[RMDB]
RNA sequence: GGGAACGACUCGAGUAGAGUCGAAAAAUACACUCCACGUGCGUGCGAGCAGUUUUCGAAAUAAUCGUACGUACGUAAAGACCCAACUCUACUCGAUGCGAGGGUCAGCAAAGUCGUUCCCAUAUAAGAUACAAGCGAUGUUCGCAUCGCUUGUAUCAAAAGAAACAACAACAACAAC
Reactivity to DMS in 0.01 (KOAc 150mM, MgCl2 10mM, bicine 150mM(pH8.5), 24C), signal-to-noise 1, nucleotides 027 to 126: a070u000a060c210a160c110u000c100c190a000c030g040u000g000c000g000u020g000c000g050a020g020c150a140g010u000u000u000u000c060g030a030a110a030u070a010a280u000c000g020u000a000c000g000u000a010c000g000u000a000a060a040g010a190c080c000c000a180a070c000u000c020u000a010c070u010c000g000a120u010g020c070g000a120g000g000g000u000c050a260g000c000a080a140a020g000u000c000g020u000u000c000c000c000a000u000a080u000a100a020
Reactivity to 2A3 in 0.01 (KOAc 150mM, MgCl2 10mM, bicine 150mM(pH8.5), 24C), signal-to-noise 1, nucleotides 027 to 126: a000u070a000c060a000c080u090c090c000a020c010g030u010g020c000g000u010g000c010g000a050g000c160a050g050u000u000u060u300c240g150a100a030a030u120a080a030u000c000g000u000a030c000g000u000a000c000g000u000a010a000a000g010a000c010c000c010a000a020c000u000c000u000a000c000u000c030g020a010u090g000c000g030a110g010g050g030u030c020a020g000c030a060a300a020g000u030c010g000u050u030c010c000c000a000u020a000u010a020a020
An RNA of 177 nucleotides, treated with DMS and 2A3 and read out base by base. DMS adducts were read by reverse transcription with MarathonRT. The DMS profile rests on 597 reads. Values cover nucleotides 27 to 126.